[RMDB]
RNA sequence: GGGAACGACUCGAGUAGAGUCGAAAAAUGCCGCAUUCAGAGACGGUUACUCUAGUGGGCCACUGUCAAUCUAGCGUUGACAUCUACAUACUAUAUAGUAAUACCAAUACUCAAGACUACGAAACGGCCAUAGGCUGCUAUUCGUAGCAGCCUAUGGAAAAGAAACAACAACAACAAC
Reactivity to 2A3 in 0.01 (KOAc 150mM, MgCl2 10mM, bicine 150mM(pH8.5), 24C), signal-to-noise 9, nucleotides 027 to 126: a000u120g030c000c000g090c060a060u090u110c060a030g010a000g010a080c040g030g020u050u040a020c010u020c010u030a020g030u050g020g020g000c030c050a080c040u020g010u010c000a000a030u010c010u120a030g040c030g100u010u020g000a010c000a030u060c030u070a090c020a130u120a060c020u040a050u080a070u070a200g050u070a060a040u060a140c020c020a040a040u040a090c020u020c040a050a060g040a130c050u050a060c120g090a070a080a010c030g050g000
Reactivity to DMS in 0.01 (KOAc 150mM, MgCl2 10mM, bicine 150mM(pH8.5), 24C), signal-to-noise 3, nucleotides 027 to 126: a100u020g000c020c030g020c100a110u040u010c130a130g000a110g030a150c040g010g030u010u000a050c040u000c060u000a040g040u010g010g000g000c030c110a120c160u010g000u000c030a030a030u000c030u040a120g010c120g050u000u000g030a020c020a000u010c100u020a050c110a050u010a070c040u000a030u060a100u010a040g020u000a070a030u010a150c060c010a080a030u020a060c080u000c040a160a070g030a020c050u030a090c060g000a000a050a100c120g020g000
Source: RMDB library OK1LIB, as collected in RNAgym. This 177-nucleotide RNA was probed chemically with 2A3 and DMS. For 2A3, 8,759 sequencing reads were counted. DMS adducts were read by reverse transcription with MarathonRT. The reactions ran in a buffer of 150 mM KOAc, 10 mM MgCl2 and 150 mM bicine (pH 8.5), at 24 C.